[RMDB]
RNA sequence: GGGAACGACUCGAGUAGAGUCGAAAAAAAAAGACCCAAGACACCCUUGGCAGAUGACCUCCUCGUUGGUGGGUGUCGGUAAUGUUGUCAGUCACAGGCAACAGUUAACGAUCUGCCUUACUAAAAAACCCAAUUUUAAGUUCGCUUAAAAUUGGGUAAAAGAAACAACAACAACAAC
Reactivity to 2A3 in 0.01 (KOAc 150mM, MgCl2 10mM, bicine 150mM(pH8.5), 24C), signal-to-noise 1, nucleotides 027 to 126: a000a070a010a040a060g130a040c050c000c000a020a050g000a010c000a000c000c000c000u030u060g000g040c010a010g000a030u030g030a000c020c010u050c000c040u180c180g160u090u050g000g000u030g000g000g020u020g000u010c030g000g010u080a070a040u050g020u020u020g010u010c050a050g080u120c090a030c030a190g020g020c010a010a000c000a020g000u040u070a000a010c010g050a000u000c000u010g000c000c010u000u100a080c030u060a040a070a010a010a010
Reactivity to DMS in 0.01 (KOAc 150mM, MgCl2 10mM, bicine 150mM(pH8.5), 24C), signal-to-noise 1, nucleotides 027 to 126: a020a130a080a110a040g000a090c020c000c010a120a140g020a000c020a010c010c010c010u010u010g010g010c010a010g000a010u010g000a030c010c000u000c130c170u000c220g000u000u030g000g010u000g000g000g000u010g000u000c000g000g020u000a080a080u010g000u010u000g010u000c010a080g030u000c250a150c230a080g030g000c030a010a030c000a010g020u010u030a010a010c030g000a010u010c010u000g000c010c010u010u010a060c130u000a000a070a010a050a050